[RMDB]
RNA sequence: GGGAACGACUCGAGUAGAGUCGAAAAGGCUGCGUAUCACUCUAGGGUACGUGAUAGUGCGAUAUAAGAAGCACUGGUACACGCCGGCAGGGACAGUUAAGAGAUGGCCGCAGUCUCGUGUCCCUGCAAAAGGAGUUCUCGUUCGCGAGAACUCCAAGUACAUCAUUUUCUUCGGAAAAUGAUGUACAAAAGAAACAACAACAACAAC
Reactivity to 2A3 in 0.01 (KOAc 150mM, MgCl2 10mM, bicine 150mM(pH8.5), 24C), signal-to-noise 5, nucleotides 027 to 156: g020g010c020u020g010c050g000u020a040u050c030a060c190u160c140u190a120g010g090g020u030a030c010g010u030g040a070u120a050g010u010g020c010g030a040u030a040u060a300a110g120a100a020g000c000a000c000u000g020g010u110a040c060a010c080g030c010c000g030g000c000a010g000g000g000a010c010a060g030u140u170a180a020g020a000g010a040u040g060g070c070c030g020c090a020g030u000c000u000c000g020u020g000u000c000c010c000u000g000c010a000a010a010a010g000g000a000g000u010u000c010u000c000g030u070u060c210g000c010g100a010g000a000a000c000u000c000c000a000a000
Reactivity to DMS in 0.01 (KOAc 150mM, MgCl2 10mM, bicine 150mM(pH8.5), 24C), signal-to-noise 2, nucleotides 027 to 156: g000g000c010u000g010c010g020u000a060u000c050a090c040u000c080u000a180g050g050g010u000a040c020g010u000g010a040u000a030g030u000g000c000g000a150u000a200u010a130a140g010a230a240g000c010a040c010u000g000g010u000a070c060a070c070g000c030c040g010g020c020a030g090g000g030a030c000a080g040u000u000a080a080g000a070g000a060u000g000g030c130c130g000c080a170g040u000c000u000c000g000u000g030u000c010c020c000u000g000c020a000a000a050a110g020g000a020g020u000u000c010u000c010g020u010u000c240g020c040g020a000g000a010a020c010u010c000c010a000a200
This 207-nucleotide RNA was probed chemically with 2A3 and DMS. For 2A3, 5,475 sequencing reads were counted. DMS adducts were read by reverse transcription with MarathonRT. It was measured as part of the RMDB library M2RFPK.